[RMDB]
RNA sequence: GGGAACGACUCGAGUAGAGUCGAAAAAACUCUUUAAGGCAAUAACGAACUAAUUCUAAGCAAGUAAUGGAGAAAUACCAGGGUCACUAUCUAGCCAUAAUAGUGCUUGACAGUAUGAUACUAACUGAAUAUGGUAAACCGUUCGCGGUUUACCAAAUCCCUUUUAACGAUUCGUCGUUAAAAGGGAAAAAGAAACAACAACAACAAC
Reactivity to 2A3 in 0.01 (KOAc 150mM, MgCl2 10mM, bicine 150mM(pH8.5), 24C), signal-to-noise 1, nucleotides 027 to 156: a000a000c120u100c050u070u060u010a110a060g030g030c010a050a050u090a070a060c120g100a020a000c000u050a070a070u140u000c000u060a080a030g030c050a140a060g050u130a080a050u100g010g000a090g040a010a040a040u020a050c030c040a000g050g000g000u000c030a000c010u020a030u000c020u020a010g020c020c020a000u020a100a090u090a080g080u080g020c010u010u000g000a000c000a010g050u060a090u100g070a020u010a110c050u120a190a120c030u050g050a040a090u230a080u180g000g030u000a000a000a000c000c000g000u000u050c100g000c000g160g000u000u000u000a000c010c000a000a000a000
Reactivity to DMS in 0.01 (KOAc 150mM, MgCl2 10mM, bicine 150mM(pH8.5), 24C), signal-to-noise 2, nucleotides 027 to 156: a080a060c020u000c050u000u010u010a120a080g030g020c040a070a080u000a080a110c070g000a040a040c050u010a040a070u000u010c080u000a110a060g040c030a050a110g020u000a080a090u000g020g030a100g000a040a050a070u000a040c060c050a020g020g010g020u000c010a050c010u010a040u000c010u000a090g000c060c030a140u000a070a120u000a110g020u020g020c050u000u000g000a060c040a060g000u000a020u000g040a090u000a030c000u010a040a160c090u020g010a070a080u010a060u000g010g010u000a000a010a020c000c000g020u010u000c300g020c030g020g010u000u010u000a000c010c000a020a020a060